[RMDB]
RNA sequence: GGGAACGACUCGAGUAGAGUCGAAAAUUGAGCGAUGUGUAUAGACAGUAACCCGGUAAAAUGUACUGAAAAUAGGGAUAAGAGUUGAACAGGUGCAAAGUGAAUAAGUAAAUUGUGAAAGUUCAGGACAUGCAUAAAAUUUCGAUUUUAUGCAUGUAAAAGAAACAACAACAACAAC
Reactivity to DMS in 0.01 (KOAc 150mM, MgCl2 10mM, bicine 150mM(pH8.5), 24C), signal-to-noise 9, nucleotides 027 to 126: u010u010g010a080g010c060g010a050u010g020u000g010u010a070u010a090g010a140c060a050g010u010a070a120c040c030c020g010g020u010a040a050a070a070u020g010u010a040c050u000g000a050a050a070a100u010a080g010g000g000a070u010a060a070g000a070g010u000u010g010a050a060c090a040g010g010u010g010c060a040a060a100g010u010g000a040a040u020a040a070g010u010a030a040a170u010u010g010u000g010a070a110a150g000u000u000c030a060g000g010
Reactivity to 2A3 in 0.01 (KOAc 150mM, MgCl2 10mM, bicine 150mM(pH8.5), 24C), signal-to-noise 9, nucleotides 027 to 126: u060u090g030a060g020c060g020a060u050g050u010g020u080a040u050a150g080a030c010a020g050u050a050a070c000c010c010g010g010u110a100a080a020a050u120g030u050a020c020u030g070a040a010a040a080u120a080g000g020g010a000u050a100a060g050a020g020u050u060g010a060a030c010a040g030g020u050g020c020a020a050a020g070u080g100a050a060u090a080a010g060u060a070a080a120u160u070g030u000g060a080a050a050g000u030u020c010a000g050g030
Conditions: 150 mM KOAc, 10 mM MgCl2 and 150 mM bicine (pH 8.5), 24 C. This 177-nucleotide RNA was probed chemically with DMS and 2A3. For 2A3 the reverse transcriptase was SuperScript II with manganese. Values cover nucleotides 27 to 126. It was measured as part of the RMDB libraries RFM100 and RFMREP.